[RMDB]
RNA sequence: GGGAACGACUCGAGUAGAGUCGAAAAGCGAUCAAUAAUAAGUCGACAACUCGAAAGAGUCGCAUGGAAACAUGCCUACUAAUGCGUCCAAUGUAGUUCGACGAUUAGGACGCAGAAGAUCGCGAAAACUAAAUGCGUAUUUCGAUACGCAUUUAGUAAAAGAAACAACAACAACAAC
Reactivity to DMS in 0.01 (KOAc 150mM, MgCl2 10mM, bicine 150mM(pH8.5), 24C), signal-to-noise 9, nucleotides 027 to 126: g010c000g000a000u000c010a160a110u030a080a060u010a100a170g000u000c000g020a030c290a130a020c010u000c000g000a160a090a130g000a000g000u000c140g010c010a000u000g000g000a180a110a160c010a000u000g000c030c020u010a020c030u020a090a110u010g010c000g000u010c000c010a100a060u060g020u000a030g000u010u010c040g010a020c010g010a080u010u010a140g000g010a000c010g020c000a040g000a090a080g000a010u000c000g000c000g000a060a040a080
Reactivity to 2A3 in 0.01 (KOAc 150mM, MgCl2 10mM, bicine 150mM(pH8.5), 24C), signal-to-noise 9, nucleotides 027 to 126: g000c000g010a000u010c030a020a030u130a200a020u100a140a020g020u010c010g000a020c040a110a020c030u000c010g040a070a050a040g010a010g000u020c020g000c000a000u000g000g020a020a030a020c000a000u010g000c000c000u030a040c030u050a040a070u070g000c000g000u000c000c010a030a060u200g010u040a060g040u050u120c070g040a030c010g010a030u010u040a040g000g000a000c000g000c000a000g010a040a020g000a000u000c000g000c010g020a050a050a000

This 177-nucleotide RNA was probed chemically with DMS and 2A3. The data come from the RNA Mapping Database (RMDB), library OK1LIB. The reactions ran in a buffer of 150 mM KOAc, 10 mM MgCl2 and 150 mM bicine (pH 8.5), at 24 C.